Annotation
An RNA of 177 nucleotides, treated with DMS and 2A3 and read out base by base. Source: RMDB library RFMREP, as collected in RNAgym. The RNA was probed in 150 mM KOAc, 10 mM MgCl2 and 150 mM bicine (pH 8.5) at 24 C. Reactivities are given for positions 27 through 126.
RNA sequence: GGGAACGACUCGAGUAGAGUCGAAAAUACGCGAUGCCGAAUUCGGGUCGCGCAAUGAUUUACUUGCUGAUACUCAGGAGUUUAUGACCAUGACUAAAAUGUGGUGGAGACUUCGGUCUCCACCACAGAAUAUUUGAAUCUUCGGAUUCAAAUAUUCAAAAGAAACAACAACAACAAC
Reactivity to DMS in 0.01 (KOAc 150mM, MgCl2 10mM, bicine 150mM(pH8.5), 24C), signal-to-noise 2, nucleotides 027 to 126: u000a090c010g000c000g000a000u000g020c020c020g030a300a260u020u000c010g020g000g010u010c010g010c020g030c040a030a060u020g000a110u010u000u000a030c020u000u000g000c010u010g000a150u010a120c130u000c000a090g010g000a040g020u000u000u020a050u010g020a210c030c030a100u020g010a110c160u000a060a040a050a160u000g000u000g020g000u020g010g000a020g000a020c000u000u020c200g020g000u000c000u000c000c000a000c020c000a000c020a000
Reactivity to 2A3 in 0.01 (KOAc 150mM, MgCl2 10mM, bicine 150mM(pH8.5), 24C), signal-to-noise 2, nucleotides 027 to 126: u120a000c000g000c000g050a000u150g300c030c000g100a110a260u300u300c020g010g000g020u000c000g000c000g000c030a020a050u140g050a100u090u080u060a040c040u050u090g300c020u040g020a040u040a190c040u040c080a030g150g000a010g040u000u030u010a060u060g020a020c000c020a060u180g110a180c050u130a160a120a130a100u100g020u030g000g000u000g000g000a020g060a010c020u050u060c180g000g000u000c000u000c000c000a000c020c000a000c000a000